[RMDB]
RNA sequence: GGGAACGACUCGAGUAGAGUCGAAAACGUGAUGUGUUCGCACAUCACGAAACUUUGAAGCCGGGAAACACGGCAACCGGCAACAAAGCCGAGUAACAAAGUAAACGCCUGACUUCGGUCAGGCGAAGCCUAAUAUAGUCUUCGGACUAUAUUAGGCAAAAGAAACAACAACAACAAC
Reactivity to 2A3 in 0.01 (KOAc 150mM, MgCl2 10mM, bicine 150mM(pH8.5), 24C), signal-to-noise 2, nucleotides 027 to 126: c010g000u000g010a010u000g040u010g020u060u050c110g050c070a000c000a010u000c000a010c000g000a010a010a000c020u000u030u030g030a060a000g010c000c000g000g030g040a070a100a030c100a010c040g020g000c000a000a010c000c000g020g000c020a020a030c040a070a090a000g020c010c020g020a020g060u100a120a050c040a090a090a000g040u100a050a220a040c020g000c000c010u000g000a000c000u020u050c290g060g000u000c010a000g000g000c000g000a010a000
Reactivity to DMS in 0.01 (KOAc 150mM, MgCl2 10mM, bicine 150mM(pH8.5), 24C), signal-to-noise 3, nucleotides 027 to 126: c010g040u000g010a020u000g010u000g010u000u000c190g070c000a010c000a010u000c000a020c010g000a060a090a110c000u010u010u010g020a070a300g020c000c010g000g000g050a210a070a080c070a060c050g000g000c250a090a030c010c020g000g000c000a060a220c080a040a050a070g010c040c020g020a070g010u000a090a120c080a080a030a120g010u020a090a190a250c010g010c000c020u000g010a000c000u000u000c140g010g010u000c010a020g000g010c040g000a020a050